The record gives the reactivity of an RNA of 177 nucleotides to DMS. The RNA was probed in 150 mM KOAc, 10 mM MgCl2 and 150 mM bicine (pH 8.5) at 24 C. The DMS profile rests on 1,719 reads.
RNA sequence: GGGAACGACUCGAGUAGAGUCGAAAACUGGAUUCUUUCGAGAAUCCAGCAUGUCUAGUCGCUAGCGAACCAUCAACGCUAGCGACUAGACUUUAUUGAUCGCAUUUGCCUCUUUCGAGAGGCAAAAAUCGUUCUUAGGGUUCGCCCUAAGAACGAUAAAAGAAACAACAACAACAAC
Reactivity to DMS in 0.01 (KOAc 150mM, MgCl2 10mM, bicine 150mM(pH8.5), 24C), signal-to-noise 2, nucleotides 027 to 126: c100u000g000g000a020u000u000c010u000u000u000c150g020a030g010a010a000u010c000c000a010g020c100a040u000g000u000c000u000a000g010u000c000g010c010u000a010g010c000g000a100a090c190c210a110u010c180a100a100c010g000c000u000a000g010c000g010a000c000u000a010g000a010c000u000u000u000a060u030u000g000a110u000c100g010c200a250u000u000u000g000c000c010u000c000u000u000u030c160g000a030g010a010g010g000c000a010a010a010a070